[RMDB]
RNA sequence: GGGAACGACUCGAGUAGAGUCGAAAAGUAGUGCCAGCUGGUGUCUUGCCAGCCAGAGCACAGCCCCGCUUGGUCAGGAAUGCAUGUGCUGAGGCCAGCACUGAGAUGAGCAGGCAUGCGUGUGUGGGACAUGGGCAGUCUUCGGACUGCCCAUGUCAAAAGAAACAACAACAACAAC
Reactivity to DMS in 0.01 (KOAc 150mM, MgCl2 10mM, bicine 150mM(pH8.5), 24C), signal-to-noise 2, nucleotides 027 to 126: g000u040a080g000u000g010c020c020a300g010c000u010g060g020u000g000u020c220u000u010g000c010c010a010g020c020c030a040g020a090g030c050a000c010a150g000c070c030c020c140g000c040u000u000g000g000u000c000a080g000g000a120a130u010g030c080a020u020g020u010g020c000u000g000a170g010g020c130c000a020g000c000a050c090u000g000a070g000a160u000g010a060g040c020a040g000g010c010a090u000g010c070g020u000g030u000g050u000g000g010
Reactivity to 2A3 in 0.01 (KOAc 150mM, MgCl2 10mM, bicine 150mM(pH8.5), 24C), signal-to-noise 1, nucleotides 027 to 126: g030u160a000g020u010g050c040c010a000g000c020u010g000g010u050g110u300c170u300u300g000c000c000a000g010c000c010a010g020a010g000c050a000c010a030g040c000c000c000c000g030c040u080u090g080g040u090c010a000g020g090a240a050u170g110c010a100u070g020u030g000c000u030g000a030g060g190c000c040a000g000c010a020c070u080g030a030g080a190u110g000a040g050c040a000g000g080c080a040u060g020c060g060u070g010u030g040u110g100g050
Description: Chemical mapping of a 177-nucleotide RNA with DMS and 2A3. Conditions: 150 mM KOAc, 10 mM MgCl2 and 150 mM bicine (pH 8.5), 24 C. Reactivities are given for positions 27 through 126. Source: RMDB library OK2TRN, as collected in RNAgym. The 2A3 profile rests on 822 reads.